[RMDB]
RNA sequence: GGGAACGACUCGAGUAGAGUCGAAAAGUUUCCGGGUUCGCCCGGAAACAAAGUGUGUGUGAAAAACAGAGAGAGAAAAACACACACACAAACUCUCUCUCAAAAGAGAAGUCUUCGGACUUCUCAACCUUAUUAGUGUCUUCGGACACUAAUAAGGAAAAGAAACAACAACAACAAC
Reactivity to DMS in 0.01 (KOAc 150mM, MgCl2 10mM, bicine 150mM(pH8.5), 24C), signal-to-noise 1, nucleotides 027 to 126: g000u000u000u000c000c010g000g000g000u000u010c220g010c000c000c000g020g000a000a000a000c000a010a020a140g010u010g000u000g000u000g020u020g040a030a010a090a070a100c070a070g020a080g000a000g020a030g010a060a150a060a150a070c000a010c000a000c000a020c010a050c120a050a140a070c130u010c030u000c000u000c000u000c090a190a110a090a110g020a020g000a000a030g010u000c000u000u000c190g000g000a010c000u000u010c020u010c000a030a050
Reactivity to 2A3 in 0.01 (KOAc 150mM, MgCl2 10mM, bicine 150mM(pH8.5), 24C), signal-to-noise 2, nucleotides 027 to 126: g000u000u000u000c010c000g020g000g020u020u060c100g070c040c010c000g000g000a010a000a000c000a000a010a010g020u000g010u000g000u000g000u030g120a230a090a040a080a010c200a050g050a000g000a010g030a020g060a080a080a040a110a000c010a000c000a000c000a000c000a000c040a020a190a120c030u040c000u010c000u000c010u000c030a080a060a070a000g010a000g000a010a000g010u000c010u050u130c300g070g020a000c000u020u020c000u000c000a000a000